RNA sequence: GGGAACGACUCGAGUAGAGUCGAAAACACCCCCCGAGAGGGUACGAGUGAGGCUUAUCCCGGGGAACUCGGCGAAUCGUCCCCACAUAGCAGUUCCCAGGACCCCCUUCUAAAAUGACCGAGAGGGAAGCUACGAACUUCGGUUCGUAGAAAAGAAACAACAACAACAAC
Reactivity to DMS in 0.01 (KOAc 150mM, MgCl2 10mM, bicine 150mM(pH8.5), 24C), signal-to-noise 9, nucleotides 027 to 129: c070a200c050c030c040c020c000c030g020a050g000a060g010g030g070u010a050c100g000a070g050u000g030a040g000g000c030u040u030a130u050c000c010c040g050g080g030g020a050a030c050u000c040g040g040c050g030a100a070u040c080g030u010c020c000c010c050a080c130a030u060a070g020c020a080g010u050u040c010c000c000a180g030g010a160c060c010c000c020c010u040u040c060u040a020a050a080a000u060g000a140c000c000g020a030g020a050g000g000g000a050a040g030
Reactivity to 2A3 in 0.01 (KOAc 150mM, MgCl2 10mM, bicine 150mM(pH8.5), 24C), signal-to-noise 9, nucleotides 027 to 129: c070a050c000c010c000c000c000c010g050a040g020a030g080g010g010u050a030c040g010a020g060u100g030a040g030g000c040u090u100a050u150c020c010c010g010g010g000g000a030a020c040u040c070g070g000c030g080a040a060u080c040g050u040c030c000c030c000a060c040a030u140a010g030c030a000g010u010u000c000c000c000a000g030g030a070c010c000c000c010c010u050u000c040u100a130a140a080a090u120g050a050c000c010g020a020g010a030g060g020g000a010a000g020
An RNA of 170 nucleotides, treated with DMS and 2A3 and read out base by base.
For 2A3, 30,603 sequencing reads were counted.
The RNA was probed in 150 mM KOAc, 10 mM MgCl2 and 150 mM bicine (pH 8.5) at 24 C.
Reactivities are given for positions 27 through 129.
It was measured as part of the RMDB library 15KLIB.
DMS adducts were read by reverse transcription with MarathonRT.